[RMDB]
RNA sequence: GGGAACGACUCGAGUAGAGUCGAAAACAAAACUACUUGAUGCAGCAUUUUCGAGAUCAUUUCAUUGCUCUAUUUCCGCAGUACAUAUCCUAUUAUACGAAAUACCAAAACAUGUUGAAUAUGAUUAUCCAUAGUAUUGCAACCAAAGAUAAAGAUCAGUUACGCUCUAGUUCGCUAGAGCGUAACUAAAAGAAACAACAACAACAAC
Reactivity to 2A3 in 0.01 (KOAc 150mM, MgCl2 10mM, bicine 150mM(pH8.5), 24C), signal-to-noise 5, nucleotides 027 to 156: c050a000a110a020a050c070u170a030c010u050u090g010a020u090g030c020a030g000c030a110u050u020u060u160c090g080a050g010a050u020c010a040u050u110u040c050a050u030u080g010c010u010c010u090a120u020u050u000c040c020g030c050a020g030u040a030c050a090u160a100u070c020c020u060a090u230u080a140u080a030c060g040a010a000a020u080a050c200c110a050a060a050a050c050a070u200g060u040u060g070a040a020u090a020u050g030a050u030u110a040u200c030c010a020u030a040g050u040a040u060u110g040c040a030a060c040c030a090a120a020g080a040u060a100a090a010g090a040u180c050
Reactivity to DMS in 0.01 (KOAc 150mM, MgCl2 10mM, bicine 150mM(pH8.5), 24C), signal-to-noise 1, nucleotides 027 to 156: c020a050a130a100a120c050u010a050c040u040u010g050a100u010g010c000a040g010c040a090u000u010u010u000c090g000a090g000a020u000c050a070u000u000u000c020a110u000u010g020c000u000c070u000a090u000u010u000c000c070g010c030a020g040u010a100c030a110u000a050u010c080c010u010a080u000u000a110u000a070c030g010a210a020a020u000a060c020c040a110a130a030a220c140a140u000g000u000u000g010a110a040u000a020u000g000a070u000u010a080u000c020c020a070u010a060g000u000a000u000u000g020c040a110a130c070c030a020a070a110g010a120u000a030a040a170g000a110u020c050
Structure probing data (2A3 and DMS) for a 207-nucleotide construct. It was measured as part of the RMDB library OK3TST. Reactivities are given for positions 27 through 156. Conditions: 150 mM KOAc, 10 mM MgCl2 and 150 mM bicine (pH 8.5), 24 C. High 2A3 reactivity points to a flexible backbone, as in loops and unpaired stretches.